Overview
Structure probing data (DMS) for a 177-nucleotide construct.
RNA sequence: GGGAACGACUCGAGUAGAGUCGAAAAGGUGCCGUGGCUGACUUUUUCCGCAACGCGUGGGCGGUUGCCGUGGCAAUAGUCGCCGGCGUAAUCCGCUCGUGGCAAGCCGGCGUAAACGCCGUGUUCAUACAUGAGGGUGCUUCGGCACCCUCAUGUAAAAAGAAACAACAACAACAAC
Reactivity to DMS in 0.01 (KOAc 150mM, MgCl2 10mM, bicine 150mM(pH8.5), 24C), signal-to-noise 1, nucleotides 027 to 126: g000g000u000g020c000c000g000u000g020g010c000u000g040a030c070u000u000u000u000u000c040c040g040c030a090a110c170g040c120g020u010g010g020g010c110g000g000u000u000g010c040c000g020u000g010g000c010a090a030u020a080g000u010c040g010c000c000g000g000c040g090u000a140a130u000c060c030g000c110u010c290g040u000g010g010c220a050a190g000c030c000g000g000c020g020u000a040a070a080c220g020c010c080g040u020g000u000u000c060a190
For DMS, 1,005 sequencing reads were counted. The reactions ran in a buffer of 150 mM KOAc, 10 mM MgCl2 and 150 mM bicine (pH 8.5), at 24 C.